[RMDB]
RNA sequence: GGGAACGACUCGAGUAGAGUCGAAAAAGUGAUGAAAAGAAAGAUGAUUUAACAAGAGAAGCGUUGAAUUAUUAUAAGGAGAGAACAGCUCAAAUUGAGAUCGUUCGACGUGACCGGACAUUGGAACAUUAAAGAAGAAAUUCGUUUCUUCUUUAAUAAAAGAAACAACAACAACAAC
Reactivity to DMS in 0.01 (KOAc 150mM, MgCl2 10mM, bicine 150mM(pH8.5), 24C), signal-to-noise 6, nucleotides 027 to 126: a090g020u010g020a070u000g000a070a080a090a120g010a090a100a140g000a060u000g010a040u000u010u000a040a060c040a080a120g010a130g010a130a220g010c140g020u000u010g010a020a030u000u000a020u000u000a120u010a080a070g010g000a290g000a080g010a070a050c120a080g020c010u010c020a020a120a160u010u000g000a040g010a050u000c050g000u000u000c020g030a090c060g010u000g000a080c060c030g010g010a040c090a040u010u000g010g000a080a090c120
Reactivity to 2A3 in 0.01 (KOAc 150mM, MgCl2 10mM, bicine 150mM(pH8.5), 24C), signal-to-noise 3, nucleotides 027 to 126: a000g100u090g060a100u050g030a010a040a050a090g100a030a080a050g040a050u060g030a040u060u120u130a080a010c020a060a030g060a010g070a260a030g030c000g040u010u020g000a000a020u010u000a010u010u090a070u090a180a030g040g030a020g020a000g020a180a030c040a070g070c000u000c040a060a100a080u050u080g030a070g020a090u000c020g010u020u000c010g010a020c040g020u030g020a010c000c030g010g030a000c020a050u090u160g040g030a060a020c010

The record gives the reactivity of an RNA of 177 nucleotides to DMS and 2A3.
It was measured as part of the RMDB library OK2TST.
For DMS, 5,631 sequencing reads were counted.
Conditions: 150 mM KOAc, 10 mM MgCl2 and 150 mM bicine (pH 8.5), 24 C.